Structure probing data (2A3 and DMS) for a 177-nucleotide construct.
In probing experiments dimethyl sulfate is read out at A N1 and C N3, which are open when not base-paired.
For DMS the reverse transcriptase was MarathonRT.
For DMS, 29,740 sequencing reads were counted.
RNA sequence: GGGAACGACUCGAGUAGAGUCGAAAAGAUAUGGAGUUAGUGUGAGUCGCGAUGAAAGCUUUCGGAAACGAAAGCUGGAGCGACCACAUAGUAACUCCUAAGUCAAAGCGGGAGUUCGCUCCCGCAACAUAUGACAGUAGUUCGCUACUGUCAUAUGAAAAGAAACAACAACAACAAC
Reactivity to 2A3 in 0.01 (KOAc 150mM, MgCl2 10mM, bicine 150mM(pH8.5), 24C), signal-to-noise 9, nucleotides 027 to 126: g060a020u120a060u210g010g010a010g000u010u030a030g020u030g000u010g070a290g050u010c000g000c030g200a300u060g040a030a020a010g000c000u000u010u000c010g020g040a110a100a090c010g010a010a010a010g000c000u000g000g000a010g000c000g010a000c000c000a000c000a000u020a020g080u020a010a010c000u000c000c000u020a140a020g050u030c090a170a040a040g000c010g000g020g010a020g010u110u200c250g120c140u000c010c000c000g000c000a000a000
Reactivity to DMS in 0.01 (KOAc 150mM, MgCl2 10mM, bicine 150mM(pH8.5), 24C), signal-to-noise 9, nucleotides 027 to 126: g010a030u000a300u010g000g010a030g010u000u000a060g010u000g010u000g000a280g020u000c000g020c000g000a130u020g010a130a150a040g000c000u000u000u010c000g000g000a140a100a230c000g000a010a010a010g000c000u000g000g000a050g020c000g000a010c010c010a000c000a010u000a100g010u000a010a010c000u000c000c000u000a030a090g000u000c040a080a130a190g000c000g010g010g000a020g020u000u010c290g010c010u000c010c000c000g010c010a010a050